[RMDB]
RNA sequence: GGGAACGACUCGAGUAGAGUCGAAAAUAAAAUCAAAAUAAGAGAAGUGAAGGCUGAGAAUAGAAAGGAUAAGAAGGUAGGAUAUUGUCACUGGUUAACCGUAACCACCACCACCAAAAUAAAAAAACCUAAGGGAAUAGUUCGCUAUUCCCUUAGGAAAAGAAACAACAACAACAAC
Reactivity to DMS in 0.01 (KOAc 150mM, MgCl2 10mM, bicine 150mM(pH8.5), 24C), signal-to-noise 1, nucleotides 027 to 126: u000a080a100a050a140u010c060a150a070a040a120u020a120a120g010a090g000a130a110g010u000g000a060a090g020g000c050u000g000a050g040a040a010u000a090g000a040a120a060g010g010a060u000a030a060g000a070a060g010g000u000a090g010g000a120u010a090u010u020g000u010c090a050c080u000g000g020u000u020a090a070c090c090g000u000a000a070c000c020a070c040c040a060c050c000a070c040c100a040a040a070a060u040a060a000a050a100a040a120a100